Conditions: 150 mM KOAc, 10 mM MgCl2 and 150 mM bicine (pH 8.5), 24 C.
This 177-nucleotide RNA was probed chemically with DMS and 2A3.
2A3 adducts were read by reverse transcription with SuperScript II with manganese.
The data come from the RNA Mapping Database (RMDB), library OK1LIB.
DMS adducts were read by reverse transcription with MarathonRT.
RNA sequence: GGGAACGACUCGAGUAGAGUCGAAAAUUACAUAAGUCUAACACCUUGUUUCGGACUAACAAGGGCGCAUGGAGGAUGGCCGAACCUCCAUAGUUAGACGUCCGAGAACCAGCCGAAAUGAAAAAGACCAUGAUAUUAUGUUCGCAUAAUAUCAUGGAAAAGAAACAACAACAACAAC
Reactivity to DMS in 0.01 (KOAc 150mM, MgCl2 10mM, bicine 150mM(pH8.5), 24C), signal-to-noise 6, nucleotides 027 to 126: u030u030a110c140a100u040a080a060g000u000c010u000a030a040c060a120c060c020u010u000g000u000u010u020c080g010g020a100c090u030a050a050c000a020a050g000g000g020c180g040c150a030u000g010g010a000g010g000a170u010g010g010c010c050g000a100a200c000c000u000c000c000a000u000a030g010u000u010a030g000a070c010g030u000c050c020g000a090g000a090a120c100c110a120g000c000c020g000a060a060a060u040g010a050a060a040a070a090g000a180
Reactivity to 2A3 in 0.01 (KOAc 150mM, MgCl2 10mM, bicine 150mM(pH8.5), 24C), signal-to-noise 9, nucleotides 027 to 126: u160u100a070c060a060u190a150a020g020u010c010u010a020a010c030a030c030c010u010u020g050u040u040u090c150g130g080a120c080u030a030a010c010a020a020g030g020g000c060g010c040a020u010g000g000a000g020g020a030u080g080g000c020c020g040a060a070c020c000u000c000c000a000u010a010g010u000u010a010g000a030c000g000u000c010c020g070a070g020a090a040c030c010a010g030c010c010g050a060a050a060u180g050a070a060a040a030a020g060a020